[RMDB]
RNA sequence: GGGAACGACUCGAGUAGAGUCGAAAAGUAUCCCUAGAUGAUAAAACACCGCACAUGGCUCGUAAGAGCGGUUAAAUUAGCAAGUAAUGCAAAUUACGCGAGGUAACGCAUGGCCUAGGCUCGUUAGAAAAGGGAGAAUCCUUCGGGAUUCUCCCAAGAACUUAGAUUUGUUCGCAAAUCUAAGUUCAAAAGAAACAACAACAACAAC
Reactivity to 2A3 in 0.01 (KOAc 150mM, MgCl2 10mM, bicine 150mM(pH8.5), 24C), signal-to-noise 2, nucleotides 027 to 156: g040u020a100u060c000c000c000u020a040g050a180u120g010a060u170a110a080a030a050c060a020c010c020g030c010a020c030a120u090g030g000c030u030c040g020u040a060a090g020a010g050c010g000g000u030u040a000a090a110u100u130a000g040c100a080a020g050u080a140a030u090g030c050a040a060a120u130u060a070c000g030c040g020a020g000g040u060a040a010c020g000c050a050u050g040g000c000c020u020a040g020g020c000u010c060g010u030u040a030g120a060a100a010a060g000g000g000a000g010a000a000u000c000c000u020u040c120g020g000g000a000u000u000c000u000c000c000c000a000a000
Reactivity to DMS in 0.01 (KOAc 150mM, MgCl2 10mM, bicine 150mM(pH8.5), 24C), signal-to-noise 2, nucleotides 027 to 156: g000u000a130u000c000c000c010u000a140g000a130u000g000a110u000a060a110a110a110c090a040c030c000g040c030a080c080a170u000g010g030c000u000c040g020u010a190a140g000a100g030c020g000g010u000u000a040a080a180u000u010a120g010c070a100a080g000u000a040a080u000g040c100a100a080a110u010u000a050c080g010c010g020a090g030g040u000a040a070c050g000c030a120u000g010g010c000c030u000a120g010g030c010u000c060g010u010u000a090g020a040a050a090a150g000g020g010a000g000a050a010u000c000c000u000u000c300g030g010g000a010u000u000c000u000c000c010c000a000a020